[RMDB]
RNA sequence: GGGAACGACUCGAGUAGAGUCGAAAAGACUACGACUUACGUGGUGGGUCGUGAACAAGCCCGGAGUACAUUCCCUAUUGGAACUAAGGGAACCCCUCCGGUCUUGUCCAACCUCUGUUUCGGCAGAGGACACCGCGCUCCAUAGCUGUAAGGCUAUUAGUCUUCACAGGUUCGCCUGUGAAGACUAAAAAGAAACAACAACAACAAC
Reactivity to 2A3 in 0.01 (KOAc 150mM, MgCl2 10mM, bicine 150mM(pH8.5), 24C), signal-to-noise 1, nucleotides 027 to 156: g050a000c080u050a000c090g020a000c000u020u040a030c000g010u010g000g000u010g010g000g010u000c010g000u020g010a020a000c000a010a000g000c000c000c000g030g000a010g020u090a030c030a130u050u000c010c000c000u090a220u140u230g200g110a110a100c140u120a170a060g000g000g010a000a000c000c050c000c000u010c000c000g010g000u000c000u000u010g000u000c010c000a060a110c010c000u020c000u010g050u020u090u120c230g060g010c000a000g000a030g000g000a000c000a000c000c000g000c000g000c010u040c070c060a030u010a010g000c000u010g040u100a050a020g010g000c000u000a000u000
The record gives the reactivity of an RNA of 207 nucleotides to 2A3. It was measured as part of the RMDB library VIROID. 2A3 adducts were read by reverse transcription with SuperScript II with manganese. For 2A3, 1,276 sequencing reads were counted. Conditions: 150 mM KOAc, 10 mM MgCl2 and 150 mM bicine (pH 8.5), 24 C.